Chemical mapping of a 207-nucleotide RNA with 2A3 and DMS. High 2A3 reactivity points to a flexible backbone, as in loops and unpaired stretches. The 2A3 profile rests on 4,098 reads. It was measured as part of the RMDB library RNAMAK.

RNA sequence: GGGAACGACUCGAGUAGAGUCGAAAAUUAGCGUAACUUCGGUUACGCUAAAAAAACCUUUGUGUGUGUCGACAACAGCUAUACCAUCCCAUUGGGAUGCGUAUAGACAUGUCGUCACACACUCUGGUAAAUCACCCGUCCCUUCGGGGACGGGUGACAAUACCUCUCUCUUCGGAGAGAGGUAUUGAAAAGAAACAACAACAACAAC
Reactivity to 2A3 in 0.01 (KOAc 150mM, MgCl2 10mM, bicine 150mM(pH8.5), 24C), signal-to-noise 3, nucleotides 027 to 156: u010u010a000g000c000g000u000a010a010c010u050u060c300g060g000u010u000a000c000g000c000u000a000a000a000a000a000a010a000c020c000u010u000u000g000u000g000u000g000u000g000u000c010g000a000c000a110a010c030a110g030c010u000a000u000a000c010c000a000u000c000c000c140a300u200u300g000g000g000a000u010g010c040g010u000a000u000a000g010a050c020a020u020g000u000c000g020u010c000a000c000a000c000a000c000u000c000u000g000g010u070a120a120a050u020c000a000c000c000c020g000u030c010c000c000u050u090c280g030g000g000g000a000c000g000g000g000u000g000a000
Reactivity to DMS in 0.01 (KOAc 150mM, MgCl2 10mM, bicine 150mM(pH8.5), 24C), signal-to-noise 1, nucleotides 027 to 156: u000u000a000g000c020g040u000a000a010c030u000u010c300g040g000u000u000a000c010g000c000u010a000a000a020a140a030a030a010c000c000u020u000u000g000u000g030u000g040u010g030u010c000g040a020c020a010a070c100a240g010c000u000a000u000a000c000c000a010u000c000c000c000a300u000u000g090g010g000a010u000g000c130g010u000a010u000a010g000a040c070a300u020g000u000c000g000u040c020a000c000a000c000a000c000u000c020u000g020g000u010a060a040a100u000c000a010c000c010c000g050u000c000c000c000u000u000c300g070g030g010g020a010c010g010g000g010u020g010a000